[RMDB]
RNA sequence: GGGAACGACUCGAGUAGAGUCGAAAAAUACUAACUUACAGCAUUAUGCAGGUGAAACAGAUUUAAGUUAUUUAACACAAAUGUGUGUCAUCACUUUCUUAAUGUUCACGUCAGCAGCGUCAGGUUAGGGUCACCCCAACUUCGGUUGGGGUGACCCAAAAGAAACAACAACAACAAC
Reactivity to 2A3 in 0.01 (KOAc 150mM, MgCl2 10mM, bicine 150mM(pH8.5), 24C), signal-to-noise 1, nucleotides 027 to 126: a000u070a000c050u050a120a000c040u020u070a000c090a020g090c000a050u050u050a010u300g050c050a030g110g000u000g060a000a000a000c030a000g140a150u010u010u010a030a150g020u000u000a000u000u210u300a140a000c050a000c040a090a020a140u270g040u020g000u000g000u130c050a040u020c000a000c000u000u100u080c060u030u090a140a080u000g000u000u000c000a210c260g170u010c080a020g060c010a000g000c030g000u020c010a010g070g000u020u000a010
The record gives the reactivity of an RNA of 177 nucleotides to 2A3. Reactivities are given for positions 27 through 126. The data come from the RNA Mapping Database (RMDB), library OK1LIB.